[RMDB]
RNA sequence: GGGAACGACUCGAGUAGAGUCGAAAAGAAGCAGUCCUUAUUGUGUGUGAUGUUUAGUCAUCGCACUGUGCCUACGGGCUGCCAACGUAGGGCCAAUGUGCCGAGAGGCACUAGAAGUACGGCUUAUUAUGACGCAUCGCCGUACCAACGAUGCUGAGCUAUAUAGCGUAUUCGUACGCUAUAUAGCAAAAGAAACAACAACAACAAC
Reactivity to 2A3 in 0.01 (KOAc 150mM, MgCl2 10mM, bicine 150mM(pH8.5), 24C), signal-to-noise 7, nucleotides 027 to 156: g160a060a010g000c010a000g010u030c020c010u110u100a200u250u220g080u030g000u000g010u010g060a020u010g100u030u230u230a220g120u160c000a000u000c000g000c000a010c000u030g030u080g090c000c020u030a040c050g000g020g000c010u010g010c000c000a050a010c060g110u120a080g000g030g000c020c020a060a090u110g010u040g000c010c010g020a030g000a010g030g000c000a010c000u010a040g060a150a000g040u070a030c030g000g000c000u010u010a100u110u080a120u150g080a030c100g000c030a010u020c020g000c020c010g040u020a070c000c000a010a020c020g000a000u010g000c020u040g020a020
Reactivity to DMS in 0.01 (KOAc 150mM, MgCl2 10mM, bicine 150mM(pH8.5), 24C), signal-to-noise 4, nucleotides 027 to 156: g000a110a080g020c020a030g000u000c030c010u000u000a090u010u000g020u000g020u010g030u000g020a030u000g010u010u000u000a250g050u000c000a010u000c010g010c010a020c050u000g020u000g020c080c050u000a100c130g010g010g010c020u000g010c060c060a080a070c060g010u000a070g030g010g000c030c030a120a140u010g010u000g020c020c000g000a240g000a300g010g010c000a010c000u000a120g020a090a090g020u010a070c070g030g030c020u000u000a110u000u000a080u000g000a190c120g030c030a030u000c030g000c000c040g010u010a110c070c000a050a040c010g010a050u000g000c010u020g010a240